[RMDB]
RNA sequence: GGGAACGACUCGAGUAGAGUCGAAAAGAGAUACACACUUACCUUGGGGACCAAACGGAAAGUGAAUUUAUUAUCCAGUUUACUAGUCAGAACUUGAUAAUUCUCUAAAUAGGUAGGAUAGUGGAAACAGCAUGCGUGCAUUCGUGCACGCAUGCUGAAAAGAAACAACAACAACAAC
Reactivity to 2A3 in 0.01 (KOAc 150mM, MgCl2 10mM, bicine 150mM(pH8.5), 24C), signal-to-noise 1, nucleotides 027 to 126: g030a000g070a000u110a090c000a000c000a000c000u000u000a000c000c000u000u050g000g000g000g000a000c100c040a300a240a040c200g000g060a000a070a000g050u140g060a020a200u020u090u000a000u000u000a000u020c000c000a000g000u000u000u000a300c150u000a050g180u240c110a180g000a140a080c000u000u000g020a050u000a000a000u200u000c000u050c000u060a170a140a170u140a000g060g000u000a000g050g000a020u020a250g000u000g000g280a000a000a000